This 177-nucleotide RNA was probed chemically with 2A3 and DMS. The reactions ran in a buffer of 150 mM KOAc, 10 mM MgCl2 and 150 mM bicine (pH 8.5), at 24 C.
RNA sequence: GGGAACGACUCGAGUAGAGUCGAAAAGUUCUGCUUUACAAUUAACAACUAAUUUAGAACUGUGACGAUCACGGGGAAUCCAACUGUUUAAUUAAAACAAAGCAUUGUGAAUAGCUGAAAAGCCCUUAACUCGAUAAAUCUUCGGAUUUAUCGAGUUAAAAGAAACAACAACAACAAC
Reactivity to 2A3 in 0.01 (KOAc 150mM, MgCl2 10mM, bicine 150mM(pH8.5), 24C), signal-to-noise 4, nucleotides 027 to 126: g010u000u000c000u000g010c000u010u040u030a030c040a060a060u040u060a250a020c050a020a030c050u150a050a090u110u140u230a100g020a050a030c010u050g020u040g060a020c080g040a090u140c040a010c020g010g000g000g080a010a010u050c040c010a020a030c030u010g050u050u050u070a140a200u060u130a020a060a020a010c070a020a060a000g090c040a020u000u020g010u000g010a080a080u040a090g000c020u040g020a000a000a060a010g020c020c000c000u000u000
Reactivity to DMS in 0.01 (KOAc 150mM, MgCl2 10mM, bicine 150mM(pH8.5), 24C), signal-to-noise 1, nucleotides 027 to 126: g010u000u000c010u000g000c000u000u060u000a180c190a000a100u000u000a050a120c270a120a190c100u000a080a070u060u010u020a160g000a230a110c010u010g000u030g000a100c180g020a020u000c030a050c000g000g050g000g000a040a000u010c000c040a010a100c170u010g000u000u000u000a080a110u030u000a110a050a190a010c140a000a050a020g000c040a090u000u000g010u010g000a080a070u000a130g000c020u000g000a030a050a050a080g000c000c050c000u000u000
The data come from the RNA Mapping Database (RMDB), library RFM100. The DMS profile rests on 1,075 reads. For 2A3 the reverse transcriptase was SuperScript II with manganese. In probing experiments dimethyl sulfate is read out at A N1 and C N3, which are open when not base-paired.